[RMDB]
Chemical mapping of a 177-nucleotide RNA with DMS and 2A3.
The DMS profile rests on 3,357 reads.

RNA sequence: GGGAACGACUCGAGUAGAGUCGAAAAGAUAUGGAGGGAUGAUGAAGAACUACUCGUCCUAUCGGAAACGAUAGGAUACGAGCUUCAUCUAAUCCCUCCUAAGUCAAAACAGAGUCUUCGGACUCUGGAUAGGCAUGUUGUUCGCAACAUGCCUAUCAAAAGAAACAACAACAACAAC
Reactivity to DMS in 0.01 (KOAc 150mM, MgCl2 10mM, bicine 150mM(pH8.5), 24C), signal-to-noise 3, nucleotides 027 to 126: g010a030u010a300u000g010g000a000g010g010g000a030u010g010a030u000g000a010a000g000a060a020c080u010a300c010u010c010g020u010c000c000u010a010u010c000g000g000a200a190a180c010g010a010u000a010g020g010a030u010a000c110g000a020g000c000u010u000c000a000u010c000u000a150a100u000c000c020c000u000c000c000u000a010a090g000u010c080a090a060a130a300c010a000g000a010g010u000c010u000u000c230g030g010a000c000u010c010u010g000
Reactivity to 2A3 in 0.01 (KOAc 150mM, MgCl2 10mM, bicine 150mM(pH8.5), 24C), signal-to-noise 2, nucleotides 027 to 126: g030a030u060a050u170g010g000a010g000g000g010a020u020g000a000u000g000a020a020g010a070a080c090u180a060c020u300c000g040u010c000c000u020a010u000c000g010g000a100a050a030c010g000a000u010a010g000g020a000u060a030c000g020a000g020c010u000u010c010a010u000c000u000a000a000u010c000c000c000u000c000c010u010a000a000g000u000c020a000a000a010a040c020a000g000a010g010u000c000u060u120c280g130g030a010c000u000c000u010g000

The RNA was probed in 150 mM KOAc, 10 mM MgCl2 and 150 mM bicine (pH 8.5) at 24 C. The data come from the RNA Mapping Database (RMDB), library TTRDES. DMS adducts were read by reverse transcription with MarathonRT.